An RNA of 177 nucleotides, treated with DMS and 2A3 and read out base by base. The DMS profile rests on 1,000 reads. DMS adducts were read by reverse transcription with MarathonRT. Values cover nucleotides 27 to 126.
RNA sequence: GGGAACGACUCGAGUAGAGUCGAAAACGAAUUGAGCGGCAUAACCUGAAUCUGAGGCAGCACCUGGCACGGCUGGGACGGAAGUCGCUGUCGUUCUCAAAAUCGGUGGAGCUGCAUGACAAAGUCACACCACUGGGUAGUUCGCUACCCAGUGGUGAAAAGAAACAACAACAACAAC
Reactivity to DMS in 0.01 (KOAc 150mM, MgCl2 10mM, bicine 150mM(pH8.5), 24C), signal-to-noise 1, nucleotides 027 to 126: c020g010a040a080u010u000g020a150g000c040g010g000c020a020u000a130a090c110c050u010g030a040a150u000c070u000g000a080g030g000c050a080g000c030a100c090c060u000g000g000c030a090c110g030g050c030u000g030g030g000a040c040g050g000a110a100g000u010c010g000c090u000g020u000c000g020u000u010c000u040c020a070a010a070a020u000c040g010g010u000g000g010a160g040c030u030g020c050a040u000g000a150c090a020a050a070g000u000c000a190
Reactivity to 2A3 in 0.01 (KOAc 150mM, MgCl2 10mM, bicine 150mM(pH8.5), 24C), signal-to-noise 1, nucleotides 027 to 126: c000g030a000a080u160u160g050a070g060c000g050g000c000a030u000a110a070c040c000u050g060a000a030u020c000u100g000a010g070g080c010a010g000c000a020c000c040u010g000g070c070a040c120g080g040c020u030g000g110g040a010c000g060g200a080a030g050u010c040g060c140u010g020u000c010g050u080u040c010u040c030a100a110a020a060u120c050g030g000u010g020g020a010g000c010u020g020c000a040u010g010a020c110a080a150a010g010u080c020a010